[RMDB]
RNA sequence: GGGAACGACUCGAGUAGAGUCGAAAAGAUAUGGAUUCAUGACAUGCUCUUGGCUCGGAAACGAGCCUUGAGCAACAGCAUGAUCCUAAGUCAAACAAGUAGCCAUACUUCGGUAUGGCUACUUGAACCUAUAUUUAUCCUUCGGGAUAAAUAUAGGAAAAGAAACAACAACAACAAC
Reactivity to 2A3 in 0.01 (KOAc 150mM, MgCl2 10mM, bicine 150mM(pH8.5), 24C), signal-to-noise 2, nucleotides 027 to 126: g020a020u070a050u190g030g000a030u150u300c020a000u020g250a300c020a050u050g000c010u000c010u020u010g020g000c000u010c000g020g020a120a090a070c000g000a000g000c060c040u000u000g000a000g010c000a000a010c000a010g040c000a000u010g000a000u000c000c000u020a110a030g070u050c040a110a020a070c000a000a090g000u000a000g010c000c000a000u010a000c010u040u130c300g060g000u020a000u000g000g000c010u000a000c000u000u000g000a000a000
Reactivity to DMS in 0.01 (KOAc 150mM, MgCl2 10mM, bicine 150mM(pH8.5), 24C), signal-to-noise 5, nucleotides 027 to 126: g000a030u010a300u000g010g000a010u010u000c000a010u000g000a040c070a190u000g010c000u000c000u000u000g000g020c000u000c000g010g000a060a060a190c000g010a020g010c000c000u000u000g000a000g020c000a010a010c190a170g000c000a020u000g000a050u000c000c010u000a050a120g000u000c010a120a140a260c010a010a010g000u000a000g010c000c000a010u000a010c000u000u010c210g010g010u000a000u000g000g000c000u000a000c000u000u000g010a070a160